[RMDB]
RNA sequence: GGGAACGACUCGAGUAGAGUCGAAAAGAUAUGGAUUGUGCAUCAGAAGGCGGUCGGAAACGACCGAUCUUCGACGACGCAUGUCCUAAGUCAAACCGGACUAAAGGCUUCGGCCUUUAGUCCGGAAGUUACCGAAAUGGUUCGCCAUUUCGGUAACAAAAGAAACAACAACAACAAC
Reactivity to DMS in 0.01 (KOAc 150mM, MgCl2 10mM, bicine 150mM(pH8.5), 24C), signal-to-noise 1, nucleotides 027 to 126: g000a040u000a300u000g000g000a000u000u000g060u000g000c000a060u000c020a110g000a000a010g000g010c010g000g000u000c000g030g010a050a040a140c010g010a000c000c000g000a000u010c000u000u000c010g000a070c250g000a030c030g000c000a010u010g010u000c000c150u010a040a130g020u000c000a090a120a230c010c000g000g000a020c010u000a020a000a020g030g000c000u000u030c270g040g000c010c000u010u000u000a010g010u000c000c010g000g000a000a010

An RNA of 177 nucleotides, treated with DMS and read out base by base.
The RNA was probed in 150 mM KOAc, 10 mM MgCl2 and 150 mM bicine (pH 8.5) at 24 C.